Description: The record gives the reactivity of an RNA of 207 nucleotides to 2A3. Values cover nucleotides 27 to 156. It was measured as part of the RMDB library RNAMAK.

RNA sequence: GGGAACGACUCGAGUAGAGUCGAAAAGCGUACUACGACUGUCACCCAAGCUCGACGAAGUACGGUAAUUACAUGCAAAUCCCAAAUAGGAUUUGCACCACCGUACAGAGAGCUUGACAAGUCAGUCGUAUCGCAAAGCGUACCUUCGGGUACGCAACGCGAUUCACGGAUUCGUCCGUGAAUCGCGAAAAGAAACAACAACAACAAC
Reactivity to 2A3 in 0.01 (KOAc 150mM, MgCl2 10mM, bicine 150mM(pH8.5), 24C), signal-to-noise 1, nucleotides 027 to 156: g060c140g070u090a080c120u000a000c040g030a000c000u000g020u040c020a160c010c040c000a010a010g000c000u010c000g230a240c030g070a180a000g010u000a010c060g010g000u090a180a280u300u170a180c170a240u090g000c000a000a000a000u010c000c020c160a250a210a070u300a080g000g010a090u000u000u010g000c000a000c010c000a020c000c000g000u000a000c010a010g000a000g000a000g000c000u000u000g040a020c010a300a000g030u000c000a000g000u010c000g030u010a020u200c000g000c000a000a090a000g000c000g000u000a000c000c000u000u080c290g080g020g000u000a000c030g000c000a000a000